[RMDB]
RNA sequence: GGGAACGACUCGAGUAGAGUCGAAAAGAUAUGGACAAUUCUUUUGACGCUCAAGUGUCGGAAACGACACAUUGAGCGAUAAGAAUGUCCUAAGUCAAACUUCGAGGUAGUUCGCUACCUCGAAGAACGGGGUAAUAAAGUUCGCUUUAUUACCCCGAAAAGAAACAACAACAACAAC
Reactivity to 2A3 in 0.01 (KOAc 150mM, MgCl2 10mM, bicine 150mM(pH8.5), 24C), signal-to-noise 4, nucleotides 027 to 126: g000a000u050a030u120g000g010a010c070a160a300u020u010c010u070u120u090u180g220a140c130g000c010u000c010a010a010g000u000g010u000c010g000g030a030a060a020c010g010a000c000a000c030a200u000u010g000a000g010c000g000a000u000a000a010g000a000a000u000g000u000c000c000u000a090a020g010u010c040a090a070a100c010u000u010c000g000a000g000g000u000a000g010u020u060c140g020c040u000a000c000c000u000c000g000a000a000g000a010a000
Reactivity to DMS in 0.01 (KOAc 150mM, MgCl2 10mM, bicine 150mM(pH8.5), 24C), signal-to-noise 3, nucleotides 027 to 126: g000a050u000a300u000g000g010a010c000a040a120u000u000c000u000u000u000u000g010a180c090g010c000u000c000a020a020g000u010g010u000c000g000g000a100a060a150c000g010a010c000a000c000a090u000u000g010a000g000c010g010a020u010a000a030g000a020a010u000g000u000c010c000u010a020a110g000u000c020a140a090a220c000u000u000c000g000a010g000g010u010a010g010u010u010c270g010c000u000a000c000c000u000c000g000a000a000g010a050a110

Chemical mapping of a 177-nucleotide RNA with 2A3 and DMS. For DMS, 4,339 sequencing reads were counted. Conditions: 150 mM KOAc, 10 mM MgCl2 and 150 mM bicine (pH 8.5), 24 C.